RNA sequence: GGGAACGACUCGAGUAGAGUCGAAAAGUGGAAUCCACACGGAGGUAAGCAGACAAAUCACCUCCAGAGGACCCCUUCAGCGAACAGAGAACUCGUGAGUCGCGAGGAGUAAGAUCAUAGCGAUAGGCCAUAUACUUGGCUUCGGCCAAGUAUAUGGAAAAGAAACAACAACAACAAC
Reactivity to 2A3 in 0.01 (KOAc 150mM, MgCl2 10mM, bicine 150mM(pH8.5), 24C), signal-to-noise 2, nucleotides 027 to 126: g090u090g020g080a090a110u070c020c000a050c020a020c110g010g010a020g020g020u120a080a050g130c080a090g130a300c120a070a200a080u110c020a030c010c000u000c040c000a010g030a020g020g020a000c010c000c010c000u050u060c050a070g000c000g040a030a020c010a020g090a020g030a210a000c010u030c040g050u040g060a040g050u070c040g020c020g000a020g080g030a070g040u070a090a010g030a110u070c030a070u050a020g040c020g060a050u040a110g110g000
Reactivity to DMS in 0.01 (KOAc 150mM, MgCl2 10mM, bicine 150mM(pH8.5), 24C), signal-to-noise 2, nucleotides 027 to 126: g040u050g000g010a130a290u000c020c000a030c120a280c180g000g020a000g000g000u000a090a080g030c230a060g000a110c230a130a090a050u010c060a040c000c000u010c010c030a050g010a220g020g000a080c060c000c010c000u010u000c070a100g000c090g000a060a040c020a050g000a130g030a170a090c030u000c010g000u040g010a060g040u010c050g000c050g010a140g010g000a060g010u000a130a120g000a130u010c030a050u000a210g020c090g010a040u020a090g020g010

Conditions: 150 mM KOAc, 10 mM MgCl2 and 150 mM bicine (pH 8.5), 24 C. Chemical mapping of a 177-nucleotide RNA with 2A3 and DMS.